Chemical mapping of a 177-nucleotide RNA with DMS.
The data come from the RNA Mapping Database (RMDB), library OK2TRN.
Conditions: 150 mM KOAc, 10 mM MgCl2 and 150 mM bicine (pH 8.5), 24 C.

[RMDB]
RNA sequence: GGGAACGACUCGAGUAGAGUCGAAAAGGCAAACAUGAUUUUAAACUGCACAAUAUCACACAGUAAAAUUAAGGACAAUGUGUUCCACCAGAUGCUAAACACAGCCAUUUAUCGAGCUACAAGGUUCCUAAGGAAGUCUCUUCGGAGACUUCCUUAGAAAAGAAACAACAACAACAAC
Reactivity to DMS in 0.01 (KOAc 150mM, MgCl2 10mM, bicine 150mM(pH8.5), 24C), signal-to-noise 1, nucleotides 027 to 126: g020g020c050a120a100a110c050a030u000g010a080u010u040u010u000a040a090a150c060u000g000c090a010c110a120a110u040a120u000c070a100c090a080c030a030g000u010a010a030a040a080u000u000a080a100g030g020a050c090a060a050u010g000u000g010u030u000c030c020a070c090c060a060g010a100u000g000c040u020a010a080a040c080a010c090a060g000c040c040a060u000u010u010a060u020c100g000a030g000c000u010a030c040a040a060g010g010u000u000c000